[RMDB]
RNA sequence: GGGAACGACUCGAGUAGAGUCGAAAACCAUAUCUGCGAUAUAUCGCGGCCAACCUGCCUAAGAAGGUAGUAGAACUCGGGUAUGAGGCCGUGCCGAUGACCGUGUUUGCCAAGGGUGCUUGGUAUGCCUUGGAUGACUUGUGUCAGUCUGGAUACAUCACUCAUUAUCCUUCGGGAUAAUGAGUGAAAAAGAAACAACAACAACAAC
Reactivity to 2A3 in 0.01 (KOAc 150mM, MgCl2 10mM, bicine 150mM(pH8.5), 24C), signal-to-noise 4, nucleotides 027 to 156: c010c010a030u070a050u120c050u120g050c070g040a010u020a010u010a040u240c030g020c000g000g000c000c020a050a060c020c010u020g020c010c010u100a180a150g070a080a050g160g030u060a080g050u040a050g070a120a040c020u030c050g040g000g000u050a030u170g050a090g030g000c000c010g000u000g010c000c020g060a060u040g010a000c000c010g020u010g050u040u020u190g100c020c000a010a020g020g000g020u090g040c040u070u130g140g020u160a030u130g250c010c000u010u000g000g020a040u040g010a010c020u120u300g020u070g010u220c000a030g040u010c050u140g020g000a030u100a060c050a040
Reactivity to DMS in 0.01 (KOAc 150mM, MgCl2 10mM, bicine 150mM(pH8.5), 24C), signal-to-noise 2, nucleotides 027 to 156: c020c010a130u000a110u000c050u000g020c020g020a160u010a140u000a060u000c030g050c010g010g000c060c010a090a200c090c050u000g000c000c030u010a030a060g020a120a100g010g040u010a120g040u020a130g000a060a130c010u000c010g000g060g040u000a060u010g010a290g020g020c000c010g000u000g030c000c030g000a080u000g000a020c000c020g000u000g030u000u000u020g020c000c040a040a050g000g000g080u000g000c060u010u000g010g030u010a050u000g030c000c010u000u010g000g000a130u010g010a040c060u000u010g010u000g030u000c010a030g020u000c040u010g010g010a150u010a060c080a170

This 207-nucleotide RNA was probed chemically with 2A3 and DMS.
Source: RMDB library OK3TST, as collected in RNAgym.
For 2A3, 3,430 sequencing reads were counted.
The DMS profile rests on 3,855 reads.
The RNA was probed in 150 mM KOAc, 10 mM MgCl2 and 150 mM bicine (pH 8.5) at 24 C.
High DMS reactivity at an A or C suggests that its Watson-Crick edge is free.